[RMDB]
RNA sequence: GGGAACGACUCGAGUAGAGUCGAAAAGGCUGUUGCCGGAGCCGAUACCGGAAUACGAGACCUGAUGUGCGGUCGAAUGCACUGAAGUACGAAAGUACGAAGAGGUCAGACCGAGGACCGAGACUCGAUAUGCUCGCUAGAUGGAGCUUUACAUCAAAUACGCCAUAAUCUUCGGAUUAUGGCGUAUAAAAGAAACAACAACAACAAC
Reactivity to 2A3 in 0.01 (KOAc 150mM, MgCl2 10mM, bicine 150mM(pH8.5), 24C), signal-to-noise 2, nucleotides 027 to 156: g020g030c030u050g030u200u040g010c000c040g010g000a020g030c040c060g080a020u090a080c070c050g000g000a050a010u070a130c060g070a050g020a090c030c020u040g050a100u130g040u020g040c000g020g000u050c030g060a060a030u090g000c020a000c000u040g060a040a000g030u000a000c000g040a040a150a000g010u000a010c010g000a050a020g060a040g030g000u000c010a000g010a020c020c030g010a080g040g020a100c100c060g020a030g020a130c000u010c020g020a030u010a060u250g100c020u020c030g000c050u040a040g000a090u030g070g010a010g010c000u050u050u050a120c070a020u070c020a120a070
Reactivity to DMS in 0.01 (KOAc 150mM, MgCl2 10mM, bicine 150mM(pH8.5), 24C), signal-to-noise 2, nucleotides 027 to 156: g010g000c000u000g040u000u000g000c020c020g020g050a110g000c040c010g020a130u000a020c090c100g030g000a120a100u020a110c060g000a170g010a030c050c000u000g010a130u000g010u000g030c030g110g000u030c140g000a080a160u010g020c000a050c030u000g000a170a180g020u000a010c000g000a170a150a240g020u010a000c000g000a100a150g000a180g010g020u010c010a140g000a090c000c030g020a120g030g030a140c060c030g010a080g010a080c020u000c020g000a130u000a050u000g020c050u000c040g040c060u010a070g000a070u000g000g010a120g010c040u000u000u000a030c040a140u000c040a040a100
Structure probing data (2A3 and DMS) for a 207-nucleotide construct. The data come from the RNA Mapping Database (RMDB), library OK3TST. Conditions: 150 mM KOAc, 10 mM MgCl2 and 150 mM bicine (pH 8.5), 24 C.